Description
Structure probing data (2A3 and DMS) for a 177-nucleotide construct. Reactivities are given for positions 27 through 126. The RNA was probed in 150 mM KOAc, 10 mM MgCl2 and 150 mM bicine (pH 8.5) at 24 C. The DMS profile rests on 3,388 reads. For 2A3, 1,807 sequencing reads were counted.

RNA sequence: GGGAACGACUCGAGUAGAGUCGAAAAACUGCCUGUUUCGACAGGCAGUAGUCUACUUCGCGCAACCGCCGAGUCGUUCCCGGGGUUGCGUGAAGUAGUUUGAUAUGAUCUUAUUCGUAAGAUCAAACUAACGGGAAACAUUCGUGUUUCCCGUUAGAAAAGAAACAACAACAACAAC
Reactivity to 2A3 in 0.01 (KOAc 150mM, MgCl2 10mM, bicine 150mM(pH8.5), 24C), signal-to-noise 1, nucleotides 027 to 126: a000c020u010g010c000c000u010g020u010u060u110c230g100a010c000a000g000g000c000a000g010u010a000g000u000c000u000a000c000u010u000c000g000c010g000c000a000a000c010c020g150c080c040g080a030g050u010c010g010u010u000c000c000c000g010g010g000g010u000u000g000c000g010u000g010a000a000g000u010a000g000u000u050u130g030a020u040a070u170g010a020u010c010u000u030a030u060u060c130g030u010a000a000g000a000u040c020a030a090a070
Reactivity to DMS in 0.01 (KOAc 150mM, MgCl2 10mM, bicine 150mM(pH8.5), 24C), signal-to-noise 2, nucleotides 027 to 126: a040c000u000g010c000c000u000g000u000u000u000c170g000a070c000a000g020g010c000a000g010u000a010g010u010c000u000a010c010u010u000c000g030c000g000c000a010a010c020c010g020c120c100g000a090g020u000c030g000u000u000c000c000c000g020g010g000g020u000u010g010c000g020u000g000a010a020g000u000a000g000u000u000u000g010a140u000a090u010g000a020u000c000u000u000a020u010u010c180g020u010a010a010g000a010u000c010a050a080a240